[RMDB]
RNA sequence: GGGAACGACUCGAGUAGAGUCGAAAAAAAGUGUACGAAAGAACAAAGAAGCAAUCAAACCGAGUAGUGAAAUGAUGGCUUCAGUCCAAAAUGGGCAAACACUACAGACGGAGCCAAAGGGAAUUAAGAAAACAAUCGUAUUCGUACGAUUGUUUUCAAAAGAAACAACAACAACAAC
Reactivity to 2A3 in 0.01 (KOAc 150mM, MgCl2 10mM, bicine 150mM(pH8.5), 24C), signal-to-noise 2, nucleotides 027 to 126: a000a000a000g080u070g010u060a070c040g090a110a030a060g040a100a010c030a040a100a040g050a020a010g020c010a000a030u050c020a040a050a020c010c040g030a030g060u100a010g000u060g030a060a040a100u100g040a000u020g000g000c000u040u040c030a010g000u020c020c000a050a100a050a280u110g000g020g030c020a020a070a030c030a020c020u060a020c000a010g100a040c030g030g010a010g000c010c000a020a020a000g040g000g030a070a010u210u090a230a060
Reactivity to DMS in 0.01 (KOAc 150mM, MgCl2 10mM, bicine 150mM(pH8.5), 24C), signal-to-noise 3, nucleotides 027 to 126: a060a060a040g020u020g010u010a050c060g000a080a030a060g000a090a070c080a090a090a090g030a040a040g000c020a060a050u010c020a030a060a100c120c040g020a140g020u000a070g020u020g000a100a050a050u000g010a070u010g010g000c010u000u000c020a100g010u000c020c030a040a040a090a070u020g000g010g020c070a070a030a060c030a030c010u000a030c160a080g000a100c130g000g000a050g010c020c030a020a030a060g000g000g000a070a060u000u000a050a110

Chemical mapping of a 177-nucleotide RNA with 2A3 and DMS.
It was measured as part of the RMDB library M2PK90.
For DMS, 2,643 sequencing reads were counted.
The RNA was probed in 150 mM KOAc, 10 mM MgCl2 and 150 mM bicine (pH 8.5) at 24 C.